[RMDB]
This 207-nucleotide RNA was probed chemically with 2A3. The reactions ran in a buffer of 150 mM KOAc, 10 mM MgCl2 and 150 mM bicine (pH 8.5), at 24 C. It was measured as part of the RMDB library OK3TST. 2A3 adducts were read by reverse transcription with SuperScript II with manganese.

RNA sequence: GGGAACGACUCGAGUAGAGUCGAAAAAAGCAUAUCAUCAUGACAACUCUCAGGGUCUAUGUCAUUCGCUCCAGGUAUUUCAAAAGCAGUCAUUUUGCAGAUUUGUCUGCCAAGCUGAAUGUUUUCAUGACCAUAGUUACAGAAGCACUUUGUAACUACAGUGCGUUAACUUCGGUUAACGCACUGUAAAAGAAACAACAACAACAAC
Reactivity to 2A3 in 0.01 (KOAc 150mM, MgCl2 10mM, bicine 150mM(pH8.5), 24C), signal-to-noise 1, nucleotides 027 to 156: a000a000g090c080a060u150a040u120c100a030u040c030a010u150g030a060c020a050a090c040u010c050u070c120a060g020g000g070u000c110u190a050u110g090u070c010a000u020u020c020g000c060u000c020c030a030g020g000u060a140u010u090u060c040a050a000a050a060g030c010a010g050u190c110a130u100u130u080u060g000c000a030g070a210u040u030u030g050u050c020u030g000c010c040a030a020g030c070u140g030a000a000u000g000u060u060u060u080c030a030u010g030a000c000c000a020u020a060g000u010u000a000c000a020g080a180a020g070c090a080c180u160u060u000g020u000a030a030c010u020